[RMDB]
RNA sequence: GGGAACGACUCGAGUAGAGUCGAAAAAUUCUACUACAUACAAACACUGCCAAUUAGUUGAUCAAUUUGAUUUAUCAAACUUAAAACCGAUAAAUAGUGCAGACUUUACAUUGACAAUUUCUACCAUUGUUCAUCCAACUUUAGUUGAAUUAGAAUGCACAUUGUGUUUUUUCGAAAACACAAUGUGAAAAGAAACAACAACAACAAC
Reactivity to 2A3 in 0.01 (KOAc 150mM, MgCl2 10mM, bicine 150mM(pH8.5), 24C), signal-to-noise 4, nucleotides 027 to 156: a000u070u050c020u030a110c010u050a070c040a110u190a050c040a040a170a000c100a030c060u010g000c030c010a090a130u090u030a080g000u010u060g030a070u070c060a080a070u100u070u290g060a040u000u040u010a020u010c030a060a030a130c020u080u120a080a100a080a100c040c020g080a070u090a090a120a000u110a050g070u120g050c020a020g030a070c000u100u150u030a070c060a090u060u080g050a010c030a030a070u070u090u040c050u080a060c010c030a020u030u030g030u040u110c040a050u040c030c020a060a090c080u080u170u060a030g010u040u000g000a000a030u020u020a050g090a160a030u150g020
Reactivity to DMS in 0.01 (KOAc 150mM, MgCl2 10mM, bicine 150mM(pH8.5), 24C), signal-to-noise 2, nucleotides 027 to 156: a060u000u000c040u000a060c050u000a070c050a140u000a070c080a190a140a090c040a070c050u010g030c060c050a120a100u000u000a070g040u000u000g000a170u000c100a050a050u030u000u000g020a100u000u000u010a060u010c020a030a040a040c040u000u000a110a090a070a060c060c050g010a050u000a000a070a080u000a060g060u000g010c040a090g010a080c010u020u010u000a010c050a090u000u000g000a070c030a060a300u000u000u000c000u010a130c070c020a090u000u010g010u000u000c020a070u000c010c030a020a020c020u000u010u000a100g050u000u000g000a010a040u000u000a070g000a050a120u000g020
The record gives the reactivity of an RNA of 207 nucleotides to 2A3 and DMS. It was measured as part of the RMDB library OK3TST. Values cover nucleotides 27 to 156. The RNA was probed in 150 mM KOAc, 10 mM MgCl2 and 150 mM bicine (pH 8.5) at 24 C.